[RMDB]
Overview: Conditions: 150 mM KOAc, 10 mM MgCl2 and 150 mM bicine (pH 8.5), 24 C. This 177-nucleotide RNA was probed chemically with DMS. The data come from the RNA Mapping Database (RMDB), library TTRDEL.
RNA sequence: GGGAACGACUCGAGUAGAGUCGAAAAGAUAUGGACGAUAGACAUGCUGAUGGGUCGGAAACGACCCUACCAGCAACAGCUGAUCGUCCUAAGUCAAAAGUAUUGGGCAGUUCGCUGCCCAAUACAAGGUUAGAGGCAGGUUCGCCUGCCUCUAACCAAAAGAAACAACAACAACAAC
Reactivity to DMS in 0.01 (KOAc 150mM, MgCl2 10mM, bicine 150mM(pH8.5), 24C), signal-to-noise 1, nucleotides 027 to 126: g010a000u020a300u020g010g020a050c000g030a000u000a030g000a130c190a170u000g000c000u010g020a160u000g000g000g010u020c000g000g000a080a120a170c010g020a000c010c000c000u000a010c040c020a000g020c050a050a040c300a100g000c040u000g000a020u000c000g040u000c000c000u010a010a080g030u010c030a080a090a180a140g000u000a000u000u000g000g000g040c000a040g030u000u000c200g010c000u040g020c000c000c000a000a000u000a000c020a020a040